The data come from the RNA Mapping Database (RMDB), library OK3TST. Structure probing data (2A3 and DMS) for a 207-nucleotide construct. Conditions: 150 mM KOAc, 10 mM MgCl2 and 150 mM bicine (pH 8.5), 24 C.
RNA sequence: GGGAACGACUCGAGUAGAGUCGAAAAGGGAAGACAGGUCAUAAACACUCAAACAAAAAAAGAAGAACAUCAAGUAUGACAAAGGAUGUACACAAAAUUAAAAUGAAACAAUACGUAUGUUAGAGAGUAUCUGAUGACCAUAAAAGGAACCAAAGAACAUUUAAUGACCUUUCGAGGUCAUUAAAUGAAAAGAAACAACAACAACAAC
Reactivity to 2A3 in 0.01 (KOAc 150mM, MgCl2 10mM, bicine 150mM(pH8.5), 24C), signal-to-noise 4, nucleotides 027 to 156: g050g000g030a070a030g040a040c090a050g000g000u030c010a000u040a050a200a010c030a010c050u060c010a050a060a090c070a010a090a030a030a020a010a000g120a070a000g020a070a020c010a010u040c020a060a050g080u100a140u160g100a040c050a020a050a010g080g000a030u060g030u090a020c070a000c010a050a130a110a020u140u100a090a090a030a060u110g060a050a100a000c030a020a080u110a070c030g060u080a040u100g020u020u040a040g010a000g010a000g120u040a020u060c050u030g090a030u010g000a010c000c000a000u090a030a110a000a000g080g010a020a000c060c090a020a070a030g190a060a000
Reactivity to DMS in 0.01 (KOAc 150mM, MgCl2 10mM, bicine 150mM(pH8.5), 24C), signal-to-noise 2, nucleotides 027 to 156: g030g010g030a090a070g040a130c140a020g000g070u010c010a000u010a010a050a030c020a020c030u000c020a130a090a300c060a040a000a080a080a060a080a230g010a100a100g000a010a060c020a040u000c050a080a110g010u000a060u010g000a080c060a030a050a110g020g030a070u000g020u000a060c000a140c030a030a100a060a160u000u000a030a080a080a150u000g000a080a050a040c030a070a050u010a020c050g010u010a050u000g010u010u000a160g020a180g020a060g010u000a050u000c020u010g010a030u010g000a040c010c030a120u010a030a040a070a050g000g000a030a080c040c020a010a050a070g000a110a220
DMS adducts were read by reverse transcription with MarathonRT.